[RMDB]
RNA sequence: GGGAACGACUCGAGUAGAGUCGAAAACCUGCCCGUGGCGGUCUUGCGGUAUCAACAUUACGGGAUACGCUUGCCUAUCACACCUGAAUAAGCGAGAAGAGACUAACAGGUUAGCCGUGGCUGUUUGGCCCUGUCAUAUGGCGUUUUGCCCCGGUGAGAUCAUUUACAUCUUCGGAUGUAAAUGAUCAAAAGAAACAACAACAACAAC
Reactivity to DMS in 0.01 (KOAc 150mM, MgCl2 10mM, bicine 150mM(pH8.5), 24C), signal-to-noise 2, nucleotides 027 to 156: c010c050u000g010c010c010c010g030u000g020g010c040g020g010u010c060u010u000g020c040g020g010u000a120u000c030a090a080c060a120u010u010a040c030g020g020g020a100u000a100c040g010c000u000u000g000c000c000u000a040u000c010a070c060a100c080c010u000g010a070a070u000a050a050g000c000g010a050g000a090a090g000a210g000a070c090u000a020a130c030a030g020g010u000u000a140g000c020c030g010u000g010g010c000u000g000u000u000u000g020g000c000c020c030u000g010u000c070a080u000a070u010g010g040c020g000u010u000u010u000g000c000c020c020c000g000g010u000g000a200
Reactivity to 2A3 in 0.01 (KOAc 150mM, MgCl2 10mM, bicine 150mM(pH8.5), 24C), signal-to-noise 6, nucleotides 027 to 156: c010c000u040g030c000c010c030g040u030g020g040c040g010g020u110c050u050u070g030c070g070g040u060a040u070c040a050a220c020a100u140u260a100c140g080g020g030a010u020a030c020g000c010u030u060g010c000c010u070a080u110c030a030c010a050c060c010u010g030a120a100u110a190a030g040c040g030a030g020a190a020g050a020g020a050c010u060a100a010c030a020g020g000u040u100a010g000c020c010g010u010g020g010c010u020g050u030u040u090g020g000c020c000c050u040g060u110c030a060u070a090u280g020g000c020g030u040u030u060u060g010c000c000c010c000g000g000u030g050a040